[RMDB]
RNA sequence: GGGAACGACUCGAGUAGAGUCGAAAAAUAAUCUAGAAUUGGUAGAAUCAGCACGUAGUGGACUAGAGCGUAUUCGCAAUAGUUAUCAAUUAAUUGAAGAGCGCGCACAAAUUGCUACUAAUAUUGAAGUCCAAUUGAUAUUCGUAUCAAUUGGACUAAAAGAAACAACAACAACAAC
Reactivity to 2A3 in 0.01 (KOAc 150mM, MgCl2 10mM, bicine 150mM(pH8.5), 24C), signal-to-noise 6, nucleotides 027 to 126: a000u170a030a040u050c050u060a060g080a150a060u020u020g020g000u010a010g010a040a060u090c040a070g030c020a010c080g040u090a060g090u080g150g020a020c010u010a010g010a020g010c000g050u090a250u110u300c040g000c010a000a010u020a010g030u050u080a020u080c020a030a080u050u300a070a140u050u140g090a070a040g020a010g040c010g000c000g000c070a010c070a070a140a070u090u130g100c000u020a020c010u020a030a080u090a090u090u080g090a030
Reactivity to DMS in 0.01 (KOAc 150mM, MgCl2 10mM, bicine 150mM(pH8.5), 24C), signal-to-noise 4, nucleotides 027 to 126: a080u020a050a090u020c060u030a090g010a070a070u000u020g020g000u010a030g010a080a040u000c140a110g000c030a050c030g000u000a110g050u010g000g010a020c020u000a030g000a300g010c000g030u030a090u020u050c020g000c000a040a120u010a020g000u000u000a060u030c040a030a090u000u020a040a100u000u000g000a060a140g010a180g000c020g020c090g030c010a070c120a040a110a060u000u000g010c030u000a010c030u000a010a020u020a110u010u010g000a110